[RMDB]
RNA sequence: GGGAACGACUCGAGUAGAGUCGAAAAGCCAACCUGUUAGCCUUCCAGCCCGAGGAACGCAUCGCCCAGGUCAUCCAGAUUCGCGGCUACACCGACGCCCCGUACCUGGUGCUGGCCACUCGCAACGUAGUGUUAGCGGGUUCGCCCGCUAACACUAAAAAGAAACAACAACAACAAC
Reactivity to 2A3 in 0.01 (KOAc 150mM, MgCl2 10mM, bicine 150mM(pH8.5), 24C), signal-to-noise 2, nucleotides 027 to 126: g040c000c020a000a040c040c030u060g010u060u110a020g020c050c010u080u070c050c020a040g020c010c000c000g040a050g020g050a110a070c010g000c020a030u060c070g020c000c000c000a010g000g010u000c000a050u080c020c000a010g000a100u150u000c000g010c010g030g000c020u060a000c100a050c120c040g080a030c040g040c040c000c000c000g040u030a030c010c030u030g000g000u030g050c030u000g040g000c010c000a010c020u100c010g050c050a080a100c090g080
Reactivity to DMS in 0.01 (KOAc 150mM, MgCl2 10mM, bicine 150mM(pH8.5), 24C), signal-to-noise 1, nucleotides 027 to 126: g000c060c040a140a140c090c030u010g000u000u000a060g050c020c030u000u000c120c000a080g060c030c020c000g010a150g010g000a030a010c120g010c050a070u010c090g000c000c070c010a100g010g000u000c050a030u010c090c030a190g000a100u000u010c070g040c300g000g000c040u020a220c000a080c110c020g010a150c090g000c030c030c000c000g000u020a080c070c000u000g000g030u000g000c050u000g000g010c000c000a050c080u040c000g030c160a100a170c220g000